Source: RMDB library OK1LIB, as collected in RNAgym. Chemical mapping of a 177-nucleotide RNA with 2A3 and DMS. For 2A3, 45,636 sequencing reads were counted.
[RMDB]
RNA sequence: GGGAACGACUCGAGUAGAGUCGAAAACAGCGUCAUGAGAAAGGGGGACAUUGGGUGCUGACCAGGUUUGCUUAGCAGCUGACAUGGUGUUCCCCGAUUUUGGUGUUAGUGUAUUGAGCGAACCUGGGUCGAUUGCGUCGUUCGCGAUGUAAUUGACAAAAGAAACAACAACAACAAC
Reactivity to 2A3 in 0.01 (KOAc 150mM, MgCl2 10mM, bicine 150mM(pH8.5), 24C), signal-to-noise 9, nucleotides 027 to 126: c020a010g010c010g050u030c020a070u100g070a030g080a140a070a060g020g010g000g010g020a010c010a040u040u080g100g010g010u050g000c000u020g020a030c000c000a000g000g000u000u000u000g000c010u030u070a010g000c020a010g000c010u010g010a020c000a030u060g050g000u040g020u020u000c000c000c000c000g000a010u010u010u020u090g050g000u010g000u000u010a020g000u000g010u030a090u040u190g040a000g000c000g000a000a000c000c000u000g000g000
Reactivity to DMS in 0.01 (KOAc 150mM, MgCl2 10mM, bicine 150mM(pH8.5), 24C), signal-to-noise 9, nucleotides 027 to 126: c050a050g010c050g010u010c020a080u030g000a110g010a050a080a120g010g010g000g010g000a090c080a080u020u010g010g010g010u010g000c030u000g000a250c000c000a010g000g000u000u000u000g000c010u000u000a050g010c160a110g010c010u000g000a020c030a030u010g010g020u030g010u000u000c010c000c000c020g000a010u020u010u030u030g010g010u000g000u000u000a020g010u000g010u020a150u030u010g000a010g010c000g000a010a010c000c000u000g010g000